[RMDB]
RNA sequence: GGGAACGACUCGAGUAGAGUCGAAAACUUUUCUCGAUCUCCUAGCUUGAUCUUUUGAUCUCUCAAAUCGAUCUUAAGAAAAAGAUCAGUCAAAGAGAUGAGAGUAGAUGUCUGUAGAUCUCGGACCGAGAUCGCUAAUCUUCGGAUUAGCGAUCUCAAAAGAAACAACAACAACAAC
Reactivity to DMS in 0.01 (KOAc 150mM, MgCl2 10mM, bicine 150mM(pH8.5), 24C), signal-to-noise 2, nucleotides 027 to 126: c060u000u000u010u000c000u010c000g020a020u000c010u020c010c000u020a300g010c010u000u000g020a030u010c010u010u000u000u000g000a040u000c000u000c150u000c230a040a090a110u000c210g000a010u010c010u000u000a160a060g010a090a030a030a000a000g020a010u000c000a030g060u000c050a030a100a170g020a040g000a060u000g010a080g020a010g000u010a040g030a090u000g000u000c040u000g010u000a030g000a030u000c010u000c030g000g020a120c150c200
Reactivity to 2A3 in 0.01 (KOAc 150mM, MgCl2 10mM, bicine 150mM(pH8.5), 24C), signal-to-noise 1, nucleotides 027 to 126: c000u000u100u110u000c010u010c010g120a040u000c010u000c010c020u010a000g000c000u010u120g000a000u020c000u030u040u020u050g020a010u040c010u030c000u030c050a040a150a140u150c040g010a000u030c000u130u130a270a090g030a190a100a000a000a000g010a000u020c000a030g050u070c040a040a020a000g010a000g040a040u030g010a030g000a010g010u010a020g010a140u120g060u000c040u040g100u080a050g010a300u040c050u000c060g020g000a000c010c050